[RMDB]
An RNA of 207 nucleotides, treated with 2A3 and read out base by base. It was measured as part of the RMDB library RNAMAK. 2A3 adducts were read by reverse transcription with SuperScript II with manganese. 2A3 is a SHAPE reagent: it acylates the 2'-hydroxyl of flexible nucleotides of all four kinds. The RNA was probed in 150 mM KOAc, 10 mM MgCl2 and 150 mM bicine (pH 8.5) at 24 C. Values cover nucleotides 27 to 156.
RNA sequence: GGGAACGACUCGAGUAGAGUCGAAAACAAGACUUCGGUCUUGAAGGUGCGUACUACCCUUAGGCGAUGAACUACGCUCGGGUACCUCCCAAAUAGGAGGUAUCUCUAGCGUGGCGCAUCGCGCUAAGGGUAUCGCUUUAUAUCGAUUCGUCGAUAAGUAACGAUUAGCCUUCGGGCUAAUCGUUACAAAAGAAACAACAACAACAAC
Reactivity to 2A3 in 0.01 (KOAc 150mM, MgCl2 10mM, bicine 150mM(pH8.5), 24C), signal-to-noise 1, nucleotides 027 to 156: c000a010a000g000a000c000u000u130c260g140g040u030c030u010u000g030a080a050g240g010u300g000c060g000u100a040c030u000a000c000c000c000u000u000a000g000g000c000g000a000u000g000a020a020c000u000a000c010g000c020u000c010g000g030g000u000a000c000c000u030c000c010c010a260a300a000u290a120g000g000a020g000g000u030a040u140c190u000c030u040a000g000c000g000u020g000g000c060g000c030a000u000c000g020c070g050c040u000a000a000g030g030g000u000a000u000c000g040c000u060u120u000a230u020a020u030c020g000a000u070u130c150g140u090c000g130a000u210a080a300